RNA sequence: GGGAACGACUCGAGUAGAGUCGAAAAGUCGCGGCUUGAGGGCGUGUACGGCUGCGCACACACACGACCCUCAAGCCGAGUGCGUUCGCGCGCUCAAAAGAAACAACAACAACAAC
Reactivity to 2A3 in 0.01 (KOAc 150mM, MgCl2 10mM, bicine 150mM(pH8.5), 24C), signal-to-noise 3, nucleotides 027 to 095: g270u200c090g030c070g240g040c020u010u010g010a010g020g010g010c010g010u010g000u010a010c030g020g010c030u050g020c050g050c020a010c000a000c000a000c000a020c040g300a300c020c000c000u000c000a000a000g000c000c000g000a010g000u040g020c030g030u030u110c300g020c000g020c000g010c040u010c020a040

Structure probing data (2A3) for a 115-nucleotide construct.
2A3 adducts were read by reverse transcription with SuperScript II with manganese.
Conditions: 150 mM KOAc, 10 mM MgCl2 and 150 mM bicine (pH 8.5), 24 C.
Source: RMDB library P50LIB, as collected in RNAgym.